This 177-nucleotide RNA was probed chemically with 2A3. Reactivities are given for positions 27 through 126. For 2A3 the reverse transcriptase was SuperScript II with manganese. For 2A3, 332 sequencing reads were counted. The data come from the RNA Mapping Database (RMDB), library OK1LIB.
RNA sequence: GGGAACGACUCGAGUAGAGUCGAAAAGGAGAGGCGCGAUGUCGUGAUUAUCCGCGGCUUGCAGUGCCGCGACGUAUCGCGUGCGCAGAUCUCCCACGUCGCCCAGGCUUCCGCUACCCCAGCUGAAGCACGCACCGGCAUUCGUGCCGGUGCGUGCAAAAGAAACAACAACAACAAC
Reactivity to 2A3 in 0.01 (KOAc 150mM, MgCl2 10mM, bicine 150mM(pH8.5), 24C), signal-to-noise 1, nucleotides 027 to 126: g050g060a070g010a050g000g030c000g070c120g100a130u130g220u300c090g000u120g030a010u020u300a050u080c000c000g010c000g030g000c000u080u300g070c240a100g260u000g220c000c000g080c000g000a000c050g050u090a000u000c000g000c020g000u000g010c000g000c010a040g010a110u000c000u000c000c020c130a060c100g080u100c080g000c000c000c000a000g010g000c000u090u110c070c070g000c010u010a090c010c000c000c000a020g000c000u060g000a100a010